An RNA of 177 nucleotides, treated with 2A3 and DMS and read out base by base. Values cover nucleotides 27 to 126. Conditions: 150 mM KOAc, 10 mM MgCl2 and 150 mM bicine (pH 8.5), 24 C. For 2A3 the reverse transcriptase was SuperScript II with manganese.
[RMDB]
RNA sequence: GGGAACGACUCGAGUAGAGUCGAAAAGAGCCUCACGAUUAUGGAUACAGAAAUGGGGACUCGAAGCACCGAGCACGAUGCUAGACGGACUUCAUCAGUCCAACCUUGGCGAGCACGUCUCAAACGAAGAGAGUUUGCUGUUCGCAGCAGACUCUCUAAAAGAAACAACAACAACAAC
Reactivity to 2A3 in 0.01 (KOAc 150mM, MgCl2 10mM, bicine 150mM(pH8.5), 24C), signal-to-noise 9, nucleotides 027 to 126: g010a000g030c010c000u030c010a030c050g030a020u100u120a090u300g190g030a100u160a260c070a050g120a050a110a030u060g000g000g000g170a260c000u000c020g010a020a010g020c050a050c070c020g000a010g000c070a010c070g100a090u080g000c020u010a040g060a070c070g020g000a010c000u050u050c100a180u090c100a050g010u000c000c000a020a050c020c020u090u110g080g020c040g010a010g000c010a010c030g050u000c010u000c000a080a140a040c090g120a190
Reactivity to DMS in 0.01 (KOAc 150mM, MgCl2 10mM, bicine 150mM(pH8.5), 24C), signal-to-noise 9, nucleotides 027 to 126: g000a040g010c000c000u000c010a030c130g000a140u050u030a090u010g010g020a180u050a110c080a060g000a080a130a140u010g000g000g010g000a110c010u000c030g000a110a060g010c130a130c030c030g000a060g030c150a040c060g010a110u020g000c020u010a080g020a170c240g000g000a040c010u000u020c280a090u030c280a040g000u000c010c000a090a160c080c090u010u020g000g020c070g000a030g010c020a030c030g010u000c020u000c020a070a060a120c240g000a140